About this RNA
Chemical mapping of a 177-nucleotide RNA with DMS and 2A3.
[RMDB]
RNA sequence: GGGAACGACUCGAGUAGAGUCGAAAAACCGGCCGAGUUCAAUGAGCUAUGCGAGAAGGUGACUAUCCUGCCAAAUGGUAAGGAACGCUUCGACGCCUACAAUCGUAUGCGGGACAUCUUCGAAGAAAAAUCCGGGUAGGUUCGCCUACCCGGAUUUAAAAGAAACAACAACAACAAC
Reactivity to DMS in 0.01 (KOAc 150mM, MgCl2 10mM, bicine 150mM(pH8.5), 24C), signal-to-noise 2, nucleotides 027 to 126: a110c070c010g050g120c040c000g010a050g010u000u010c060a110a130u040g010a070g030c050u000a200u020g000c010g020a120g010a070a060g000g030u000g020a170c080u030a180u000c000c060u020g000c000c000a240a150a130u040g040g010u000a000a000g000g000a220a300c110g000c000u010u010c010g000a090c100g010c140c010u000a070c100a080a170u000c080g000u020a080u050g000c000g020g000g010a100c020a000u000c040u000u000c000g000a060a070g000a040a130
Reactivity to 2A3 in 0.01 (KOAc 150mM, MgCl2 10mM, bicine 150mM(pH8.5), 24C), signal-to-noise 2, nucleotides 027 to 126: a000c000c000g040g000c000c020g020a000g000u010u120c050a040a130u150g000a050g000c040u060a090u090g030c060g000a050g030a000a000g030g040u030g000a000c070u060a090u030c000c010u000g000c000c000a300a260a030u300g000g000u210a180a050g020g000a110a080c030g000c040u090u080c000g040a030c020g030c000c020u120a070c030a030a070u070c000g060u120a040u300g000c000g100g000g070a050c000a010u000c000u010u010c020g060a070a080g060a120a170

For DMS the reverse transcriptase was MarathonRT. For 2A3 the reverse transcriptase was SuperScript II with manganese. DMS (dimethyl sulfate) methylates the pairing face of unpaired adenines and cytosines. The 2A3 profile rests on 813 reads. The RNA was probed in 150 mM KOAc, 10 mM MgCl2 and 150 mM bicine (pH 8.5) at 24 C.